[RMDB]
RNA sequence: GGGAACGACUCGAGUAGAGUCGAAAAGCACCGCCGCAGUGCAGCCAACCCCCUACCGCACACACGCUGCCCGAGCCUGCUGCUGUCGCAGUCGUACCCGGUCCGGGGCCGGACCCGGGUAGGCGUAAAUAUACGCGACGUUCGCGUCGCGUAUAUUAAAAGAAACAACAACAACAAC
Reactivity to DMS in 0.01 (KOAc 150mM, MgCl2 10mM, bicine 150mM(pH8.5), 24C), signal-to-noise 1, nucleotides 027 to 126: g000c080a070c000c030g050c080c030g030c050a010g010u010g000c010a130g010c050c070a110a220c050c010c010c040c000u000a100c080c030g000c040a070c090a100c060a070c030g040c040u000g010c010c010c060g000a100g010c030c040u000g020c040u000g010c070u010g020u010c090g010c090a050g020u010c050g010u010a020c000c000c020g000g020u000c010c010g010g000g030g040c140c030g000g020a020c060c030c020g030g000g030u000a010g010g010c040g010u000a060